Annotation
Structure probing data (DMS and 2A3) for a 177-nucleotide construct. For DMS, 2,431 sequencing reads were counted. Reactivities are given for positions 27 through 126.

[RMDB]
RNA sequence: GGGAACGACUCGAGUAGAGUCGAAAAGAUAUGGAAAUGUGUAGACAUGCUCCGUGGUCGGAAACGACCACAGGAGCAACAGCUACCAUUUCCUAAGUCAAAUCGACGUAUGUUCGCAUACGUCGAACACGCUGUUAUUGUUCGCAAUAACAGCGUGAAAAGAAACAACAACAACAAC
Reactivity to DMS in 0.01 (KOAc 150mM, MgCl2 10mM, bicine 150mM(pH8.5), 24C), signal-to-noise 2, nucleotides 027 to 126: g020a000u000a010u000g000g000a000a010a000u010g000u020g020u010a010g000a030c040a300u020g000c010u000c000c000g010u000g000g010u010c000g030g000a010a000a030c000g000a010c000c000a000c000a000g030g010a010g020c000a030a020c160a110g000c010u000a000c010c000a000u000u000u000c000c010u000a000a090g000u000c010a100a150a180u000c020g000a010c000g010u010a000u000g000u010u050c210g020c010a020u020a000c000g020u000c010g020a010a120
Reactivity to 2A3 in 0.01 (KOAc 150mM, MgCl2 10mM, bicine 150mM(pH8.5), 24C), signal-to-noise 2, nucleotides 027 to 126: g010a000u030a020u050g000g060a000a010a020u030g160u050g010u030a000g000a030c150a300u300g030c010u000c000c000g030u000g020g000u020c010g020g000a040a000a000c000g000a010c000c020a010c020a010g000g000a000g000c010a010a000c000a010g000c000u000a000c000c000a000u000u000u000c000c020u000a000a000g010u000c010a010a020a300u070c000g000a010c000g000u000a000u020g060u060u070c300g020c150a010u010a010c000g000u000c010g020a010a000